[RMDB]
RNA sequence: GGGAACGACUCGAGUAGAGUCGAAAAGGGGAUGGUUUCAACUAAAAUUUCAUUGUGAUCACAUUCCUGAUGGUACAAUGUCCUCCUGUCUUGUUAAGGUUAUUGUGAUUAUAGCAGACUAGUAGAAGCACCUCGAUAAGUUCGCUUAUCGAGGUGCAAAAGAAACAACAACAACAAC
Reactivity to DMS in 0.01 (KOAc 150mM, MgCl2 10mM, bicine 150mM(pH8.5), 24C), signal-to-noise 1, nucleotides 027 to 126: g010g010g020g010a170u010g000g010u000u000u000c050a090a080c120u000a030a070a090a120u030u000u010c080a100u000u010g030u010g000a010u000c020a110c060a120u020u000c000c000u000g000a150u000g000g000u000a030c060a020a010u000g000u010c020c020u010c060c000u000g000u000c030u010u000g010u000u000a070a250g010g000u000u010a080u000u010g020u000g010a030u000u000a050u030a040g010c040a050g010a040c050u000a040g010u000a080g010a110a160
Reactivity to 2A3 in 0.01 (KOAc 150mM, MgCl2 10mM, bicine 150mM(pH8.5), 24C), signal-to-noise 1, nucleotides 027 to 126: g010g010g030g020a010u080g000g080u010u040u080c030a100a070c010u230a050a100a080a300u100u300u060c060a060u060u090g080u060g070a060u010c010a000c010a160u000u040c010c000u060g000a140u130g000g000u000a090c060a110a080u140g020u000c020c000u060c060c000u020g040u080c060u070u050g040u020u030a080a050g070g020u090u060a120u100u130g060u070g050a030u100u100a080u070a060g040c020a010g030a050c080u120a010g180u020a010g010a150a000